[RMDB]
RNA sequence: GGGAACGACUCGAGUAGAGUCGAAAAACCCUCCUAUGGCGUAAAUGAUGCGCCACUAGCGAAAGAGAAAAGCCAAAGGGCGUAGUCAUAGGGUAUGACGGAUGAGAAGUCCAAUCUUCAUGUUGGCACUUUCGAAAUCUUUCGAGAUUUCGAAAGUAAAAGAAACAACAACAACAAC
Reactivity to DMS in 0.01 (KOAc 150mM, MgCl2 10mM, bicine 150mM(pH8.5), 24C), signal-to-noise 3, nucleotides 027 to 126: a100c000c000c010u020c020c000u010a010u000g000g000c010g020u010a040a140a090u060g020a180u010g010c000g000c000c000a000c030u000a100g020c060g030a130a110a120g020a230g010a100a140a120a190g000c000c000a030a050a040g020g000g010c000g000u000a040g010u000c000a000u010a030g010g000g000u000a040u010g010a100c160g000g020a070u020g010a140g000a080a070g020u010c010c070a050a030u030c090u010u010c120a090u000g020u000u000g010g000c080
Reactivity to 2A3 in 0.01 (KOAc 150mM, MgCl2 10mM, bicine 150mM(pH8.5), 24C), signal-to-noise 5, nucleotides 027 to 126: a000c000c000c010u000c000c000u010a010u000g000g000c000g060u170a070a120a140u200g090a090u130g060c000g000c000c000a000c000u000a000g000c010g070a020a300a030g150a020g020a030a060a070a000g000c020c010a280a210a020g030g000g000c000g000u020a030g010u020c000a000u010a010g020g010g000u010a080u070g060a010c060g040g040a020u080g040a100g080a170a010g050u000c010c000a020a100u070c050u160u070c060a120u090g000u000u020g020g030c010
This 177-nucleotide RNA was probed chemically with DMS and 2A3. Reactivities are rounded to 0.1 and cut off at 0 and 3.